[RMDB]
RNA sequence: GGGAACGACUCGAGUAGAGUCGAAAAAGCCAUGACGGAUACGUCCGUCAUGGCAAUGCCAAUGAUGAGACCAAUCACAGACCUGUUCUGAAAGCAAUGAGGACAGCUUACUAUCUCUGAGGCCCAAGAUUUAUGGCGACUUCGGUCGCCAUAAAUCAAAAGAAACAACAACAACAAC
Reactivity to DMS in 0.01 (KOAc 150mM, MgCl2 10mM, bicine 150mM(pH8.5), 24C), signal-to-noise 1, nucleotides 027 to 126: a040g000c000c000a000u000g000a020c000g000g000a050u000a040c300g070u000c000c000g040u070c000a000u000g000g000c120a000a050u000g000c100c060a050a090u070g000a070u000g070a090g000a050c120c280a080a060u000c140a250c210a000g040a110c120c070u000g000u000u000c000u060g000a080a080a120g000c200a050a020u000g000a070g000g000a000c130a000g000c080u000u000a140c260u000a070u000c020u000c000u000g000a140g080g090c040c000c090a070a180
Reactivity to 2A3 in 0.01 (KOAc 150mM, MgCl2 10mM, bicine 150mM(pH8.5), 24C), signal-to-noise 3, nucleotides 027 to 126: a000g010c000c000a000u000g000a000c010g000g010a000u000a040c270g150u040c000c000g000u000c000a010u000g000g050c020a000a020u020g010c000c000a040a190u160g020a030u160g030a060g020a060c050c040a110a030u110c040a090c020a060g080a090c000c030u030g030u070u000c030u110g080a100a060a020g170c050a090a190u240g010a080g000g000a000c010a000g010c000u010u100a100c020u070a040u100c000u010c020u030g000a010g040g000c000c000c000a090a000